[RMDB]
This 207-nucleotide RNA was probed chemically with 2A3.
The RNA was probed in 150 mM KOAc, 10 mM MgCl2 and 150 mM bicine (pH 8.5) at 24 C.
It was measured as part of the RMDB library ARCHII.
RNA sequence: GGGAACGACUCGAGUAGAGUCGAAAAUUUCAGGCGUCGAUUCUCACAAGAUCGCGGUGAAGUUCUCCCAGGGCAGACCCGCUAAAACUUUACUGGGAUCGCCGUAUGUUUUCCUUGCCCGUCGGGUAGCAUGCGGUUAAAUUAAUGACUGGGCUAUACUUAAGUUCAGGUUCGCCUGAACUUAAGUAAAAGAAACAACAACAACAAC
Reactivity to 2A3 in 0.01 (KOAc 150mM, MgCl2 10mM, bicine 150mM(pH8.5), 24C), signal-to-noise 2, nucleotides 027 to 156: u150u150u110c020a010g130g010c050g110u090c020g080a130u040u040c010u010c000a100c030a030a060g040a110u120c070g010c020g100g000u030g020a100a050g000u000u000c010u000c040c000c020a000g050g010g000c020a020g020a070c040c070c020g010c040u040a050a080a050a170c050u230u190u150a050c000u020g010g000g010a020u050c010g000c000c000g000u000a000u000g020u000u080u080u210c000c000u000u050g000c000c000c000g010u010c000g050g000g000u000a000g010c000a000u000g010c000g000g000u000u000a000a040a000u050u050a050a030u080g000a000c060u170g010g000g000c000u000a020u000